This 177-nucleotide RNA was probed chemically with DMS and 2A3. The RNA was probed in 150 mM KOAc, 10 mM MgCl2 and 150 mM bicine (pH 8.5) at 24 C. DMS adducts were read by reverse transcription with MarathonRT.

[RMDB]
RNA sequence: GGGAACGACUCGAGUAGAGUCGAAAACCGCUACUCUUCGGAGUAGCGGAUACAUCUCGGGUCCGGGCCUUACCGUAGGACCAACGGUAAGGCCUGAGAUGAAGGGAGAGAUUUUCGAAUCUCUCAAGAUAGAUCUUUCAUUCGUGAAAGAUCUAUCAAAAGAAACAACAACAACAAC
Reactivity to DMS in 0.01 (KOAc 150mM, MgCl2 10mM, bicine 150mM(pH8.5), 24C), signal-to-noise 5, nucleotides 027 to 126: c000c000g000c000u000a000c000u000c000u000u010c200g020g010a020g020u000a000g020c000g010g010a020u000a050c120a080u000c000u000c000g020g020g000u000c030c030g000g010g000c000c000u000u000a000c000c000g000u000a030g020g010a100c190c150a020a020c000g000g000u000a000a010g010g010c000c000u000g000a010g010a020u000g000a160a130g010g010g000a010g010a010g010a010u000u000u000u010c130g000a030a020u000c000u000c010u000c010a060a060
Reactivity to 2A3 in 0.01 (KOAc 150mM, MgCl2 10mM, bicine 150mM(pH8.5), 24C), signal-to-noise 2, nucleotides 027 to 126: c000c000g000c000u010a010c000u010c010u020u120c270g130g010a000g010u000a000g000c000g000g010a000u030a010c020a070u000c010u010c000g110g040g030u000c010c000g010g010g000c000c000u000u000a000c000c000g020u060a070g110g220a100c020c020a010a010c010g000g020u000a000a000g000g000c000c000u000g000a000g010a010u060g070a060a070g180g110g000a010g010a000g000a010u020u030u050u110c170g080a020a010u000c000u000c000u000c000a000a010